Description
Chemical mapping of a 207-nucleotide RNA with 2A3 and DMS. The 2A3 profile rests on 1,098 reads. Source: RMDB library OK3TST, as collected in RNAgym. The reactions ran in a buffer of 150 mM KOAc, 10 mM MgCl2 and 150 mM bicine (pH 8.5), at 24 C.
[RMDB]
RNA sequence: GGGAACGACUCGAGUAGAGUCGAAAAAUCAAACUAGACUGGCUGAGCAGUGAGUUCCAGGAAUUUACCUGAUAGAUGCCAGUCUUGUAGUUGUCUCAAAGUAAUUCUGGGAUGUUGUCUUCACCUUAGCAACUCCAAUGAAACCCGACAUAGACUACACGUAUUUAAUCUUCGGAUUAAAUACGUGAAAAGAAACAACAACAACAAC
Reactivity to 2A3 in 0.01 (KOAc 150mM, MgCl2 10mM, bicine 150mM(pH8.5), 24C), signal-to-noise 2, nucleotides 027 to 156: a000u120c050a060a060a030c010u000a000g000a010c010u000g020g020c010u050g020a020g030c010a060g080u090g080a070g050u070u030c030c090a030g070g070a080a050u150u160u040a140c010c000u000g040a060u110a150g060a040u050g010c000c000a000g040u000c000u000u020g000u010a050g000u020u070g050u000c030u020c080a060a060a030g040u070a070a100u100u060c060u100g040g020g030a080u130g060u020u010g070u050c010u120u130c110a150c090c060u040u180a010g000c010a010a010c010u020c000c000a020a030u050g040a060a030a020c000c000c000g070a020c050a050u180a060g020a030c020u070a040
Reactivity to DMS in 0.01 (KOAc 150mM, MgCl2 10mM, bicine 150mM(pH8.5), 24C), signal-to-noise 2, nucleotides 027 to 156: a150u010c040a050a100a070c010u000a050g000a010c010u000g010g020c010u010g030a300g020c030a070g040u000g000a090g030u000u010c030c100a120g040g010a060a100u010u010u010a040c020c030u000g000a130u000a140g000a180u000g000c010c000a060g010u010c010u000u000g020u000a070g020u010u000g020u000c020u000c040a100a080a140g030u000a060a170u000u000c020u010g000g030g040a100u010g040u000u000g000u000c050u000u000c040a090c060c090u010u010a110g000c070a040a040c000u000c050c010a040a120u010g000a040a090a070c030c000c000g020a120c040a110u000a130g000a080c030u000a170